[RMDB]
RNA sequence: GGGAACGACUCGAGUAGAGUCGAAAAGAUAUGGAGCGAACUACACUCAAACAGCCGAAGAACUCGGAAACGAGGGAGGCUGGUAGAGUGCGCUCCUAAGUCAAACGCAUACCUUCGGGUAUGCGAAGUAGAAGUACUGGUUCGCCAGUACUUCUACAAAAGAAACAACAACAACAAC
Reactivity to 2A3 in 0.01 (KOAc 150mM, MgCl2 10mM, bicine 150mM(pH8.5), 24C), signal-to-noise 3, nucleotides 027 to 126: g030a010u070a030u160g000g000a000g010c000g020a050a040c090u270a030c230a000c000u020c000a230a300a190c000a020g010c000c010g210a300a050g030a080a040c010u000c000g030g000a090a050a040c010g000a010g000g000g010a020g010g000c010u000g000g000u010a010g010a000g000u010g000c010g000c010u000c000c000u000a080a000g020u010c020a080a050a070c030g010c010a000u000a010c000c000u030u080c300g110g000g010u010a000u000g000c010g000a030a010
Reactivity to DMS in 0.01 (KOAc 150mM, MgCl2 10mM, bicine 150mM(pH8.5), 24C), signal-to-noise 4, nucleotides 027 to 126: g000a040u010a300u000g000g000a000g010c000g000a070a080c110u020a300c020a010c020u000c010a050a190a300c010a010g030c000c000g000a100a090g000a140a200c010u010c010g000g000a090a060a200c000g000a010g010g000g000a040g020g010c000u000g010g000u000a160g000a020g020u000g020c000g000c000u000c000c000u000a000a080g000u000c060a080a110a290c010g020c010a000u000a000c000c020u000u020c190g010g000g010u000a000u000g000c000g000a000a030
An RNA of 177 nucleotides, treated with 2A3 and DMS and read out base by base. Reactivities are rounded to 0.1 and cut off at 0 and 3. The data come from the RNA Mapping Database (RMDB), library TTRDEL. The DMS profile rests on 3,134 reads. The reactions ran in a buffer of 150 mM KOAc, 10 mM MgCl2 and 150 mM bicine (pH 8.5), at 24 C.